[RMDB]
About this RNA
Structure probing data (DMS and 2A3) for a 177-nucleotide construct. For DMS, 1,025 sequencing reads were counted. It was measured as part of the RMDB library TTRDES. For 2A3 the reverse transcriptase was SuperScript II with manganese.
RNA sequence: GGGAACGACUCGAGUAGAGUCGAAAAGAUAUGGAACCACCGUCCGAAGAACAACAUCGAUCGGAAACGAUCGAGUGUUGGGAGGAUCGGUGGUUCCUAAGUCAAACACAGCGCUUCGGCGCUGUGAGGAUCCUGUUAGGUUCGCCUAACAGGAUCCAAAAGAAACAACAACAACAAC
Reactivity to DMS in 0.01 (KOAc 150mM, MgCl2 10mM, bicine 150mM(pH8.5), 24C), signal-to-noise 1, nucleotides 027 to 126: g010a010u000a300u010g020g000a000a000c000c000a030c000c000g040u010c000c000g010a100a240g020a140a180c000a010a050c030a090u000c000g030a000u000c010g010g010a070a050a220c000g030a010u000c000g030a010g020u010g010u010u010g000g070g040a140g010g010a020u000c010g050g000u000g010g010u000u000c000c000u000a010a060g000u000c030a160a110a300c020a030c010a000g030c000g070c000u000u010c210g050g010c000g030c000u030g000u000g000a080
Reactivity to 2A3 in 0.01 (KOAc 150mM, MgCl2 10mM, bicine 150mM(pH8.5), 24C), signal-to-noise 1, nucleotides 027 to 126: g000a020u120a030u190g000g010a000a000c030c000a020c010c010g000u000c000c000g170a300a170g080a120a070c000a000a000c000a050u020c010g000a000u030c010g050g000a110a050a090c020g040a000u020c010g050a060g000u080g000u000u010g020g010g020a230g030g000a040u180c140g000g000u000g010g020u000u020c000c010u000a000a000g000u030c010a000a040a000c010a000c000a020g060c020g010c000u100u150c300g240g000c000g000c000u040g000u020g010a030